[RMDB]
RNA sequence: GGGAACGACUCGAGUAGAGUCGAAAAGCAACGGUGACCGACGCCGAGAUCGAGGCCUUCUUUGCUGAAGAGGCUGCCGCUCUCGUCUGAAGGAACCAGCCUGGCUCAGCGUGCUGCUGUGCAGCGGCCAGGCUUCAUCUCUAACAGCAGCGAACGGGUCAGUAUCAGGGUUCGCCCUGAUACUGACAAAAGAAACAACAACAACAAC
Reactivity to 2A3 in 0.01 (KOAc 150mM, MgCl2 10mM, bicine 150mM(pH8.5), 24C), signal-to-noise 2, nucleotides 027 to 156: g070c120a100a050c110g000g020u020g120a300c000c010g000a010c020g000c010c010g000a000g000a000u020c030g050a020g030g000c000c010u250u150c030u070u170u220g220c200u220g040a030a020g030a010g020g020c010u070g240c250c020g000c000u000c000u000c010g020u010c080u130g090a050a040g010g000a000a000c010c000a010g000c000c000u000g000g000c000u020c070a010g000c020g110u160g030c020u000g000c000u020g000u030g060c020a020g010c000g000g010c010c000a010g010g000c010u000u020c000a000u000c000u010c010u010a000a010c000a000g030c000a000g000c010g000a110a010c120g050g000